This 207-nucleotide RNA was probed chemically with 2A3 and DMS. The DMS profile rests on 2,928 reads. For DMS the reverse transcriptase was MarathonRT.
RNA sequence: GGGAACGACUCGAGUAGAGUCGAAAAUCAAUCGCAUUGUUGGGUGAAAGUUGGAGAAUAAAUCCUCACCAAGAUUUAAAUUAAGCAAGAGAUAUAAGGCCGCUCCUUAUAUUGCGACUUGCUUAAAGAUAUCCGGCAAAGUUCGCUUUGCCGGAAACGUGUAAAUUAGGUUCGCCUAAUUUACACGAAAAGAAACAACAACAACAAC
Reactivity to 2A3 in 0.01 (KOAc 150mM, MgCl2 10mM, bicine 150mM(pH8.5), 24C), signal-to-noise 1, nucleotides 027 to 156: u100c020a030a060u070c030g100c160a080u130u010g000u050u030g010g000g000u040g050a130a090a160g110u090u180g040g020a020g070a040a090u140a140a070a090u020c030c030u030c010a050c030c000a000a080g030a000u100u140u300a050a090a090u050u010a010a000g000c000a010a000g000a010g010a010u000a000u000a000a000g000g010c080c040g070c130u200c040c000u000u000a010u000a000u000u120g040c070g140a080c010u000u000g000c000u000u000a000a010a000g000a010u050a040u010c000c010g000g000c000a000a000a030g000u080u090c080g000c160u000u000u000g000c000c000g000g000a000a000a000
Reactivity to DMS in 0.01 (KOAc 150mM, MgCl2 10mM, bicine 150mM(pH8.5), 24C), signal-to-noise 2, nucleotides 027 to 156: u000c060a030a140u000c150g040c080a170u000u000g040u000u000g000g000g050u000g000a080a060a160g000u010u010g020g020a130g000a090a180u000a070a030a110u000c020c030u010c060a100c030c030a110a100g010a060u010u000u000a030a110a230u000u000a010a030g000c010a000a010g000a300g000a010u000a020u000a020a020g010g030c120c300g010c280u000c000c010u000u010a010u000a020u000u020g010c020g030a080c020u000u000g010c000u000u010a010a020a060g020a180u000a050u000c020c000g000g010c030a020a020a020g030u000u020c300g030c000u000u000u000g020c000c000g000g010a000a000a020